[RMDB]
This 207-nucleotide RNA was probed chemically with 2A3 and DMS. The RNA was probed in 150 mM KOAc, 10 mM MgCl2 and 150 mM bicine (pH 8.5) at 24 C. For 2A3 the reverse transcriptase was SuperScript II with manganese. DMS adducts were read by reverse transcription with MarathonRT.
RNA sequence: GGGAACGACUCGAGUAGAGUCGAAAACAUACUACUAUAAAGAACUGCCCAAGACUGGGUAAUUUCAAAAGGAAAGAGGUUUAAUUGACUCAUAGUUCAGCAUGGCUAGGGAGGCCUCAGGAAACUUAUGGUCAUGGCAGAAGGCAAAGGGGAAGCAAAUAAUGGUACCAUUCGUGGUACCAUUAUUAAAAGAAACAACAACAACAAC
Reactivity to 2A3 in 0.01 (KOAc 150mM, MgCl2 10mM, bicine 150mM(pH8.5), 24C), signal-to-noise 6, nucleotides 027 to 156: c020a070u160a050c030u030a020c020u120a050u120a300a170a040g040a060a040c030u040g000c000c010c020a100a080g170a110c190u090g020g000g010u050a070a080u070u140u090c060a070a080a040a030g050g020a040a060a030g040a020g050g010u050u110u170a070a080u110u130g030a020c010u010c120a050u050a050g020u070u060c020a010g020c030a090u080g040g000c030u030a020g010g020g040a010g020g010c000c010u010c030a020g030g030a040a060a020c020u060u070a040u170g010g010u020c010a000u010g030g010c000a010g010a060a010g030g000c010a010a050a020g020g000g000g000a000a010g020c010a020
Reactivity to DMS in 0.01 (KOAc 150mM, MgCl2 10mM, bicine 150mM(pH8.5), 24C), signal-to-noise 3, nucleotides 027 to 156: c040a110u010a090c040u010a120c050u000a100u000a100a200a190g010a030a070c050u000g000c020c010c010a060a170g010a170c200u010g000g030g020u000a010a000u000u000u010c060a080a100a160a110g000g010a070a110a130g000a050g030g000u000u000u000a040a110u000u000g010a150c010u010c060a080u000a050g010u000u000c030a080g040c040a090u000g000g010c030u000a060g020g010g020a120g000g010c040c040u000c080a090g020g000a090a050a050c050u010u010a070u000g010g020u010c040a040u000g010g020c040a070g010a060a080g020g020c030a030a080a100g020g000g030g020a040a060g010c050a080